[RMDB]
RNA sequence: GGGAACGACUCGAGUAGAGUCGAAAAGAUAUGGAGACUGUACGAGCGAGGAUCAGGGAUCGGAAACGAUCCCUGGGAGCUCGUGUACUGGUCUCCUAAGUCAAAGAGCAGGGUUCGCCCUGCUCAAGAAUGUGUUUUACUUCGGUAAAACACAUUCAAAAGAAACAACAACAACAAC
Reactivity to 2A3 in 0.01 (KOAc 150mM, MgCl2 10mM, bicine 150mM(pH8.5), 24C), signal-to-noise 2, nucleotides 027 to 126: g000a000u010a010u060g000g000a000g000a000c020u100g080u260a000c030g010a020g050c010g060a300g020g000a000u000c010a020g000g020g000a000u020c000g020g020a020a020a020c000g020a010u000c070c040c020u020g000g000g000a010g000c000u010c020g010u020g000u020a140c050u130g050g000u000c010u000c010c000u000a000a000g030u020c040a140a100a170g010a000g000c000a000g010g050g000u080u140c190g210c000c000c000u010g020c000u020c000a000a000
Reactivity to DMS in 0.01 (KOAc 150mM, MgCl2 10mM, bicine 150mM(pH8.5), 24C), signal-to-noise 3, nucleotides 027 to 126: g000a010u000a150u020g000g010a040g010a020c010u000g020u020a010c010g010a040g030c000g010a090g010g010a080u000c000a010g020g010g000a010u010c000g010g010a020a020a060c010g020a000u000c010c010c000u000g020g000g000a050g040c000u000c010g030u000g010u000a060c300u000g020g010u000c000u000c000c000u000a010a080g000u000c000a130a160a220g010a010g000c010a020g000g020g040u000u010c300g010c000c000c010u010g000c000u000c000a030a060